[RMDB]
RNA sequence: GGGAACGACUCGAGUAGAGUCGAAAAUCAUCGUUCUUCGGAACGAUGAAGUAUAACGCGGGCUCCGGACUCAGGCGUAGCUGGCCUGGGAUAGUCACAGUAUGGGGCAAACUUUCGAGUUUGCCAAGAAACAAUGUACGUUCGCGUACAUUGUUUCAAAAGAAACAACAACAACAAC
Reactivity to DMS in 0.01 (KOAc 150mM, MgCl2 10mM, bicine 150mM(pH8.5), 24C), signal-to-noise 5, nucleotides 027 to 126: u000c010a010u000c000g010u000u000c010u000u010c200g020g000a000a000c000g010a000u000g000a010a070g010u000a070u010a080a100c100g030c060g010g000g000c030u000c060c030g020g010a130c020u000c020a020g010g000c020g010u000a110g010c140u000g000g010c010c010u010g000g000g010a060u000a060g020u000c060a070c080a100g020u000a090u010g010g020g000g010c000a000a000a010c010u000u010u010c180g010a030g010u000u000u000g010c000c010a040a060
Reactivity to 2A3 in 0.01 (KOAc 150mM, MgCl2 10mM, bicine 150mM(pH8.5), 24C), signal-to-noise 3, nucleotides 027 to 126: u010c000a000u000c000g010u000u010c010u020u050c230g100g010a000a000c000g000a000u000g000a000a010g000u040a110u030a200a040c070g010c070g040g000g000c030u020c030c020g050g060a060c020u000c020a010g010g000c010g050u070a060g060c100u120g070g000c010c000u010g000g000g010a040u100a030g040u040c020a010c020a120g070u130a110u210g120g010g000g060c030a000a000a000c020u100u070u110c220g010a000g020u000u000u000g000c000c010a000a020